Background
An RNA of 177 nucleotides, treated with DMS and 2A3 and read out base by base. The data come from the RNA Mapping Database (RMDB), library OK1LIB. For DMS the reverse transcriptase was MarathonRT. Values cover nucleotides 27 to 126. 2A3 adducts were read by reverse transcription with SuperScript II with manganese.
RNA sequence: GGGAACGACUCGAGUAGAGUCGAAAAACACUAUGCAUUAGAGAGAUUGAAGAGGUAGAAAUCACUUCACCAAGAGAAAUUAUCCUCCCGGAUGUCUCUGAAACAAUCAAGUCCUGGUUGCCGCCAGAACACCAUGCCCAUUCGUGGGCAUGGUGUUAAAAGAAACAACAACAACAAC
Reactivity to DMS in 0.01 (KOAc 150mM, MgCl2 10mM, bicine 150mM(pH8.5), 24C), signal-to-noise 2, nucleotides 027 to 126: a140c080a080c060u000a130u070g000c080a120u030u010a120g040a040g000a010g000a030u000u000g030a240a180g000a000g000g000u030a030g020a060a150a230u000c090a060c000u020u020c150a090c260c240a040a000g000a000g000a020a040a040u010u040a060u000c010c000u030c060c060c090g000g040a070u000g000u000c000u000c000u000g020a040a070a070c120a120a010u030c090a040a080g000u030c140c000u000g000g010u000u060g000c060c060g020c000c000a000g000
Reactivity to 2A3 in 0.01 (KOAc 150mM, MgCl2 10mM, bicine 150mM(pH8.5), 24C), signal-to-noise 1, nucleotides 027 to 126: a000c010a000c030u090a020u110g030c020a060u020u080a030g000a000g000a000g060a070u000u060g080a170a000g040a040g020g000u140a020g030a080a100a110u070c070a060c000u070u160c040a080c130c010a270a000g110a000g030a040a110a010u070u060a040u060c040c060u010c000c010c000g080g030a010u050g060u050c040u000c000u000g000a010a120a000c030a000a000u130c040a030a000g130u080c000c000u030g010g000u010u030g020c000c010g000c040c030a000g040